[RMDB]
Notes: The record gives the reactivity of an RNA of 177 nucleotides to 2A3 and DMS. Values cover nucleotides 27 to 126. Conditions: 150 mM KOAc, 10 mM MgCl2 and 150 mM bicine (pH 8.5), 24 C.

RNA sequence: GGGAACGACUCGAGUAGAGUCGAAAAUGGUGUUAAGUGGAAUAAGUGGAAAAAUAUACAUAUAUGUACAGGGGGCUACAUAUAUGUAUAUGCCCCCUCGGGAGAGUAUAAGUAGGUAUAAGGUGGACAGCCAUACUACGUUCGCGUAGUAUGGCUGAAAAGAAACAACAACAACAAC
Reactivity to 2A3 in 0.01 (KOAc 150mM, MgCl2 10mM, bicine 150mM(pH8.5), 24C), signal-to-noise 1, nucleotides 027 to 126: u120g030g040u060g040u050u040a060a000g050u080g070g060a080a110u100a220a040g050u100g020g000a040a010a000a090a000u050a000u000a040c000a000u000a000u000a000u020g030u000a040c200a210g100g000g000g000g000c020u010a000c000a000u070a000u020a000u020g000u000a000u000a000u000g060c000c000c000c000c030u000c030g010g010g000a000g000a000g080u030a020u010a180a000g050u010a050g000g050u040a040u030a040a010g050g020u040g030g000a010
Reactivity to DMS in 0.01 (KOAc 150mM, MgCl2 10mM, bicine 150mM(pH8.5), 24C), signal-to-noise 1, nucleotides 027 to 126: u040g020g010u010g010u010u000a040a060g050u000g000g010a080a020u000a160a090g010u010g000g000a030a060a100a040a030u000a010u000a000c010a030u000a000u000a000u000g000u000a030c120a080g000g010g010g020g000c180u000a010c010a020u000a030u000a000u000g000u030a000u000a040u000g000c050c060c010c040c000u000c030g010g000g010a010g000a060g000u000a040u040a040a120g020u000a000g000g020u030a060u030a050a050g000g010u010g010g020a220
Source: RMDB library OK1LIB, as collected in RNAgym.